[RMDB]
RNA sequence: GGGAACGACUCGAGUAGAGUCGAAAAGCACAAGGCUAGAGGAAGUCUAUAUGUACACAUGGUGGCAUUUUGUCCGAAGAUGGAAAUGUCCAGAUUAGACGCGUAUGCACUUUUGGUCUGAGAAUGGCCUGGUCAGAUCGUUCGCGAUCUGACCAGGAAAAGAAACAACAACAACAAC
Reactivity to DMS in 0.01 (KOAc 150mM, MgCl2 10mM, bicine 150mM(pH8.5), 24C), signal-to-noise 1, nucleotides 027 to 126: g000c050a030c130a050a090g010g000c050u000a040g000a090g000g000a080a090g000u000c040u010a060u020a080u020g010u000a030c160a070c120a160u020g030g060u000g010g030c010a030u000u000u010u020g010u000c050c110g020a080a130g000a120u000g000g010a040a040a060u020g000u010c010c000a160g020a100u000u000a050g010a080c160g020c040g010u000a000u000g000c130a150c040u010u000u010u000g010g000u010c020u000g000a180g000a070a110u000g000g000
Reactivity to 2A3 in 0.01 (KOAc 150mM, MgCl2 10mM, bicine 150mM(pH8.5), 24C), signal-to-noise 1, nucleotides 027 to 126: g030c020a010c020a070a010g000g000c010u030a010g000a020g070g170a110a040g020u000c050u010a090u020a030u100g160u110a040c100a000c040a080u080g020g040u070g040g000c000a020u010u000u000u170g040u000c000c000g070a130a040g080a060u160g010g100a000a040a020u080g020u000c010c050a070g010a140u070u050a030g010a020c030g040c030g110u070a030u140g080c030a010c070u090u090u090u120g000g000u020c020u040g040a040g090a210a170u150g070g010

Chemical mapping of a 177-nucleotide RNA with DMS and 2A3. The reactions ran in a buffer of 150 mM KOAc, 10 mM MgCl2 and 150 mM bicine (pH 8.5), at 24 C. 2A3 adducts were read by reverse transcription with SuperScript II with manganese. DMS adducts were read by reverse transcription with MarathonRT.